Structure probing data (2A3) for a 177-nucleotide construct. 2A3 adducts were read by reverse transcription with SuperScript II with manganese. Reactivities are given for positions 27 through 126. The RNA was probed in 150 mM KOAc, 10 mM MgCl2 and 150 mM bicine (pH 8.5) at 24 C. It was measured as part of the RMDB library RFM100. Reactivities are rounded to 0.1 and cut off at 0 and 3.
RNA sequence: GGGAACGACUCGAGUAGAGUCGAAAAUAACAGGGGGUUACGGGAAUAUCCUGAGGAAACUCCAGCCUCCAAGCCUCAUGGGAGCAGUUAGAUCUGCAGGGUUAGUGCUCUGGCUACUGCACAGAAAGGUUGUGUACACCUUCGGGUGUACACAACCAAAAGAAACAACAACAACAAC
Reactivity to 2A3 in 0.01 (KOAc 150mM, MgCl2 10mM, bicine 150mM(pH8.5), 24C), signal-to-noise 1, nucleotides 027 to 126: u090a000a010c110a070g000g000g000g000g000u070u100a070c080g070g000g030a220a070u080a050u190c000c070u150g000a060g070g000a030a050a050c000u000c020c000a000g030c010c000u060c000c010a000a000g080c000c000u210c000a010u160g030g000g110a020g000c030a000g000u000u170a000g070a100u160c080u050g000c000a000g020g010g000u030u050a020g000u020g220c020u000c070u080g000g000c000u020a060c000u000g000c030a000c040a000g250a000a070a000